[RMDB]
RNA sequence: GGGAACGACUCGAGUAGAGUCGAAAAGAGACAUACUCUGAUGUUUCACUAGUUAGGUUAACCCCUACACCAGUCUCCAUCAUUGCAGGAGACAGCCCACAUGUUUUGGUCGCAUUGUCAAGGCACAGCACUGACGUGAUUUCGAUCACGUCAGUGCAAAAGAAACAACAACAACAAC
Reactivity to DMS in 0.01 (KOAc 150mM, MgCl2 10mM, bicine 150mM(pH8.5), 24C), signal-to-noise 1, nucleotides 027 to 126: g000a030g010a050c030a080u000a030c080u000c130u030g010a020u000g000u000u000u000c000a010c210u000a010g000u000u000a010g040g020u010u000a210a190c240c130c000c020u000a040c160a060c080c030a120g000u000c000u010c000c010a100u010c110a130u050u020g050c090a170g010g000a020g020a000c010a050g010c020c000c000a080c300a060u000g010u000u000u000u000g010g000u000c000g000c050a060u000u000g020u000c070a000a100g000g050c010a070c300a010
Reactivity to 2A3 in 0.01 (KOAc 150mM, MgCl2 10mM, bicine 150mM(pH8.5), 24C), signal-to-noise 1, nucleotides 027 to 126: g030a000g000a000c040a040u100a080c050u090c100u210g150a010u060g000u000u060u000c020a040c090u050a020g120u110u000a000g030g010u000u050a030a020c000c000c000c000u000a010c040a000c040c050a050g010u000c020u000c030c010a090u140c000a060u030u300g060c140a020g060g020a000g030a010c020a000g020c010c020c000a050c020a040u030g020u030u120u100u080g000g040u100c030g020c050a050u090u170g020u100c020a030a030g040g040c010a010c040a090
Chemical mapping of a 177-nucleotide RNA with DMS and 2A3. The data come from the RNA Mapping Database (RMDB), library OK2TST. For DMS the reverse transcriptase was MarathonRT. The reactions ran in a buffer of 150 mM KOAc, 10 mM MgCl2 and 150 mM bicine (pH 8.5), at 24 C. As a SHAPE reagent, 2A3 marks flexible, mostly unpaired nucleotides at the ribose 2'-OH.